Conditions: 150 mM KOAc, 10 mM MgCl2 and 150 mM bicine (pH 8.5), 24 C. An RNA of 177 nucleotides, treated with DMS and 2A3 and read out base by base. For 2A3, 40,504 sequencing reads were counted.
RNA sequence: GGGAACGACUCGAGUAGAGUCGAAAACGCCGUUCGGUGAGGAGAAGAUUGUACUCAGCCGCUACCUGAAGGCCGGUGACACUCUCAUCUUCGACCCGGCGAUGUGGAAGCGUGUGGUCCUCAACGGACAGUCUAUCUUAUUCGUAAGAUAGACUGUAAAAGAAACAACAACAACAAC
Reactivity to DMS in 0.01 (KOAc 150mM, MgCl2 10mM, bicine 150mM(pH8.5), 24C), signal-to-noise 9, nucleotides 027 to 126: c090g010c040c020g010u010u020c040g010g010u000g000a140g000g010a060g010a130a060g010a090u020u020g000u010a070c080u010c040a260g010c040c010g000c060u010a090c080c060u010g010a130a120g010g010c020c020g010g010u010g010a160c140a060c110u010c060u010c120a070u020c060u010u010c060g000a260c300c020c000g000g010c010g000a060u050g010u010g000g000a120a050g010c030g000u020g010u010g000g000u000c000c010u000c060a050a070c070g000g000
Reactivity to 2A3 in 0.01 (KOAc 150mM, MgCl2 10mM, bicine 150mM(pH8.5), 24C), signal-to-noise 9, nucleotides 027 to 126: c050g030c010c010g020u120u170c050g020g030u040g010a020g020g040a040g020a090a080g050a110u090u180g070u130a090c040u050c100a040g010c020c010g030c040u120a140c030c030u100g120a150a060g100g000c010c010g020g030u100g030a020c010a030c060u070c010u030c040a210u030c000u140u090c050g040a080c010c010c000g000g010c020g010a050u140g060u100g090g060a050a020g020c020g010u120g020u030g070g080u010c000c010u030c030a040a030c020g020g010